[RMDB]
RNA sequence: GGGAACGACUCGAGUAGAGUCGAAAAGAAUAUAAGAGCGCAGUAAAUGUGAGAGCAAACUGCGCCCGGACUGUAGGAUCCGGUGGCACAGCAACGCUCACUCACAAAACGCUGUGCCACUUGAAGAAUAGUAUGGAUACUUCGGUAUCCAUACUAUAAAAGAAACAACAACAACAAC
Reactivity to 2A3 in 0.01 (KOAc 150mM, MgCl2 10mM, bicine 150mM(pH8.5), 24C), signal-to-noise 9, nucleotides 027 to 126: g040a060a030u220a010u050a110a020g020a010g010c000g000c010a000g010u080a030a120a070u080g010u030g030a060g010a010g090c060a130a130a010c000u000g000c000g000c000c000c000g010g000a010c030u140g120u290a070g080g070a080u020c000c010g000g000u010g000g000c000a000c000a010g000c010a050a070c080g020c040u030c030a040c010u120c010a090c060a040a100a030a020c090g000c000u000g000u000g000c000c000a010c010u050u090g050a050a020g060a120
Reactivity to DMS in 0.01 (KOAc 150mM, MgCl2 10mM, bicine 150mM(pH8.5), 24C), signal-to-noise 7, nucleotides 027 to 126: g010a130a070u040a110u010a070a050g000a140g010c000g020c000a000g000u010a040a110a120u020g000u010g000a080g000a070g000c070a060a120a050c000u000g000c010g000c000c000c010g010g000a060c050u030g010u030a070g010g000a160u010c010c010g000g010u020g000g000c000a000c000a000g010c010a140a120c180g000c030u010c020a050c060u020c270a120c280a090a050a100a120c180g000c000u000g020u000g000c000c000a010c010u020u020g010a100a110g010a090

Record summary:
The record gives the reactivity of an RNA of 177 nucleotides to 2A3 and DMS. Reactivities are given for positions 27 through 126. The data come from the RNA Mapping Database (RMDB), library OK1LIB. Conditions: 150 mM KOAc, 10 mM MgCl2 and 150 mM bicine (pH 8.5), 24 C. DMS adducts were read by reverse transcription with MarathonRT.